[RMDB]
The record gives the reactivity of an RNA of 207 nucleotides to 2A3.

RNA sequence: GGGAACGACUCGAGUAGAGUCGAAAAAGAUUAGCACGGACCUUGGCACAAGAGAGCAUUGCUUCAUCCAGAGCACUUAACCAAUGCUGGGAUCUCCACCAAGUGUCCAGUAGGCGAAGGAGCCGGAGGGCAGUGGAGCGAGCGCACUGGGGGCUCACGUCAUUACCUAUUUCGAUAGGUAAUGACGAAAAGAAACAACAACAACAAC
Reactivity to 2A3 in 0.01 (KOAc 150mM, MgCl2 10mM, bicine 150mM(pH8.5), 24C), signal-to-noise 2, nucleotides 027 to 156: a000g060a010u160u100a020g050c040a020c080g010g020a010c000c000u020u010g060g000c070a040c030a160a010g040a000g000a000g050c020a060u070u130g030c050u120u120c010a100u080c060c070a020g000a010g110c050a010c120u150u130a030a020c020c000a020a020u050g020c060u090g010g060g000a080u070c020u000c010c000a000c030c020a130a060g060u020g010u120c000c010a000g000u010a000g000g020c020g110a150a130g120g010a060g000c040c050g110g080a040g050g010g000c000a010g000u030g000g030a010g010c060g020a040g070c030g000c030a090c050u060g000g000g020g090g000c000u000c000a020

The data come from the RNA Mapping Database (RMDB), library OK3TST. The RNA was probed in 150 mM KOAc, 10 mM MgCl2 and 150 mM bicine (pH 8.5) at 24 C. The 2A3 profile rests on 790 reads.